[RMDB]
RNA sequence: GGGAACGACUCGAGUAGAGUCGAAAAGCUGGUCCGGCUUGGCCCCAGCGAACACUUGACGAACGGAUAGUCCCGUCUUGUGGAUUAGGACGUUCUAGGUCCGGGCUGGCCCCUAGUUCGUCCGAAACCUACCCGUCCGUUUCGACGGACGGGUAGGAAAAGAAACAACAACAACAAC
Reactivity to DMS in 0.01 (KOAc 150mM, MgCl2 10mM, bicine 150mM(pH8.5), 24C), signal-to-noise 1, nucleotides 027 to 126: g000c010u000g000g000u060c040c030g010g000c010u040u010g000g020c150c000c030c070a190g030c170g030a120a200c050a000c010u000u000g000a020c000g000a090a070c050g040g060a250u110a050g000u000c160c070c040g060u040c020u000u000g020u000g000g030a140u010u010a130g030g000a000c000g060u010u000c000u000a000g020g000u030c070c030g070g040g000c140u020g000g070c200c070c000c020u000a000g000u000u000c030g000u030c010c000g000a030a120a150
Reactivity to 2A3 in 0.01 (KOAc 150mM, MgCl2 10mM, bicine 150mM(pH8.5), 24C), signal-to-noise 2, nucleotides 027 to 126: g010c020u050g030g070u040c060c060g040g020c040u040u110g080g010c030c000c000c000a030g090c010g060a030a000c040a020c020u000u010g020a000c030g030a110a020c010g000g130a140u090a160g100u180c060c000c000g030u030c010u040u040g010u000g030g030a090u090u190a100g030g000a000c000g000u000u000c010u010a010g000g010u040c030c000g010g080g090c170u160g030g070c020c000c000c000u000a010g000u020u000c000g000u000c010c000g000a030a010a010
Chemical mapping of a 177-nucleotide RNA with DMS and 2A3.
Values cover nucleotides 27 to 126.
The 2A3 profile rests on 1,276 reads.
The reactions ran in a buffer of 150 mM KOAc, 10 mM MgCl2 and 150 mM bicine (pH 8.5), at 24 C.